[RMDB]
RNA sequence: GGGAACGACUCGAGUAGAGUCGAAAAAGCUGCCGGGUGUUCCACCUACGGGAACGGUGCCGAGUGAGGCUUAUCCCGGGGGGUAGCGCUCCGUGCCCUUCCAUAGCACUGGGGUCCCGGGCCCCCUUACCUUUUGAGUUCGCUCAAAAGAAAAGAAACAACAACAACAAC
Reactivity to 2A3 in 0.01 (KOAc 150mM, MgCl2 10mM, bicine 150mM(pH8.5), 24C), signal-to-noise 9, nucleotides 027 to 129: a000g030c030u050g020c000c000g010g000g020u050g030u040u020c010c010a090c020c040u080a100c080g040g000g010a060a020c050g060g060u110g030c010c010g040a080g060u160g160a070g050g000c020u040u080a090u090c000c000c010g000g000g000g000g000g010u060a040g060c040g010c030u000c010c000g010u010g010c000c000c020u160u100c040c030a120u160a040g010c010a010c110u140g000g010g000g020u050c000c010c010g020g050g010c000c000c000c010c000u010u070a080c000
Reactivity to DMS in 0.01 (KOAc 150mM, MgCl2 10mM, bicine 150mM(pH8.5), 24C), signal-to-noise 9, nucleotides 027 to 129: a100g030c000u020g010c000c010g000g010g010u020g010u010u040c020c000a100c080c050u000a080c080g010g010g000a030a050c170g020g010u020g010c040c000g000a090g030u030g000a110g000g040c020u020u030a100u030c010c020c000g000g000g000g020g000g040u020a060g020c220g010c010u020c000c010g030u010g010c000c050c110u040u040c110c090a060u060a170g020c030a040c060u050g010g000g000g000u000c030c050c010g000g010g000c010c000c000c000c010u020u030a040c090

The data come from the RNA Mapping Database (RMDB), library 15KLIB.
An RNA of 170 nucleotides, treated with 2A3 and DMS and read out base by base.
Values are in units of 0.01, from 0 to 300, in steps of 10.
In probing experiments dimethyl sulfate is read out at A N1 and C N3, which are open when not base-paired.
For DMS, 130,224 sequencing reads were counted.
The reactions ran in a buffer of 150 mM KOAc, 10 mM MgCl2 and 150 mM bicine (pH 8.5), at 24 C.
Values cover nucleotides 27 to 129.
The 2A3 profile rests on 55,224 reads.